This 177-nucleotide RNA was probed chemically with DMS. The RNA was probed in 150 mM KOAc, 10 mM MgCl2 and 150 mM bicine (pH 8.5) at 24 C. Reactivities are given for positions 27 through 126.

[RMDB]
RNA sequence: GGGAACGACUCGAGUAGAGUCGAAAAUGUUGCUUGAGAAAUCAGCAGCCCAGUGACCAUCGCGGCUGUCAUGAGAACAAGAGAGGACCACAAAGAGAUGCCAAAGAAUUGGUCGUUGGCAUAGGUGAGGUAACCGAUCUUUCGAGAUCGGUUACCUAAAAGAAACAACAACAACAAC
Reactivity to DMS in 0.01 (KOAc 150mM, MgCl2 10mM, bicine 150mM(pH8.5), 24C), signal-to-noise 1, nucleotides 027 to 126: u000g020u030u000g020c070u000u010g020a060g000a150a080a190u000c040a020g000c040a040g000c000c000c140a140g000u000g000a050c020c070a060u000c150g050c200g020g020c020u000g010u000c090a110u000g000a070g000a060a070c060a060a020g000a070g020a090g010g000a160c050c040a080c140a010a090a180g000a100g020a020u000g000c020c000a000a040a040g010a050a300u010u020g000g000u000c050g000u000u000g000g000c050a020u000a130g000g010u000g010